RNA sequence: GGGAACGACUCGAGUAGAGUCGAAAAAUAGACGAUGUCUGCGUCACUUGGUGCGGCAGCAGCGCCACGUUAGGGCCGUUCAGGCUAUCCGCCGGGCCAAAGUCCGACGUCACCUGUACCGCUUGGUGCAUGAGCGACGCGGCGUACGGGCCGGACAGUACAAGAGUGGUUUCGACCACUCUUGUACAAAAGAAACAACAACAACAAC
Reactivity to 2A3 in 0.01 (KOAc 150mM, MgCl2 10mM, bicine 150mM(pH8.5), 24C), signal-to-noise 2, nucleotides 027 to 156: a000u190a000g020a030c020g050a040u070g040u050c010u060g040c020g030u060c040a020c040u010u050g000g020u010g000c000g170g050c110a080g030c090a040g050c070g000c000c000a010c050g040u060u190a090g020g020g000c010c010g030u080u120c070a010g050g000c030u020a060u030c000c040g000c020c000g100g010g000c000c010a050a020a030g030u040c030c000g020a170c000g120u010c000a000c020c000u000g010u040a000c000c030g170c300u240u300g000g000u010g010c000a020u190g040a100g080c010g010a000c010g000c000g000g000c010g020u050a060c040g000g000g000c010c000g000g010a050c040a060